[RMDB]
RNA sequence: GGGAACGACUCGAGUAGAGUCGAAAAACAAUGGGAAGGUGGGCUUAGAAGCAGCCACCCUUUAACGAGUUCGUAACAGAUCACCCAUCGAGGUCAGAGGCACCUAAAAUGGACGGGAAUUAAUCCAGCAUCAUACAUUUUUCGAAAUGUAUGAUGCAAAAGAAACAACAACAACAAC
Reactivity to DMS in 0.01 (KOAc 150mM, MgCl2 10mM, bicine 150mM(pH8.5), 24C), signal-to-noise 6, nucleotides 027 to 126: a080c090a110a080u020g010g020g020a050a040g010g020u010g000g000g000c030u000u020a120g020a090a140g020c210a100g010c020c000a040c020c000c000u000u020u000a070a090c140g010a080g000u000u000c030g020u010a110a110c080a090g000a050u020c060a140c020c010c020a090u010c060g000a070g000g010u010c020a110g010a080g010g010c060a050c030c030u020a020a050a070a060u020g000g000a030c080g000g010g020a080a110u000u020a070a090u020c020c060a120
Reactivity to 2A3 in 0.01 (KOAc 150mM, MgCl2 10mM, bicine 150mM(pH8.5), 24C), signal-to-noise 9, nucleotides 027 to 126: a000c050a040a050u080g020g020g020a050a050g030g030u060g030g080g000c010u040u080a080g040a150a020g040c030a010g020c010c000a040c010c000c000u020u050u050a050a030c040g010a020g050u090u070c030g010u040a040a030c010a040g020a050u040c010a040c020c010c000a020u050c060g040a040g000g030u030c040a030g030a100g220g000c050a020c000c020u100a070a090a040a070u100g030g020a020c040g050g010g070a040a080u120u060a080a030u060c030c010a010

Structure probing data (DMS and 2A3) for a 177-nucleotide construct. It was measured as part of the RMDB libraries RFM100 and RFMREP. 2A3 adducts were read by reverse transcription with SuperScript II with manganese. The RNA was probed in 150 mM KOAc, 10 mM MgCl2 and 150 mM bicine (pH 8.5) at 24 C.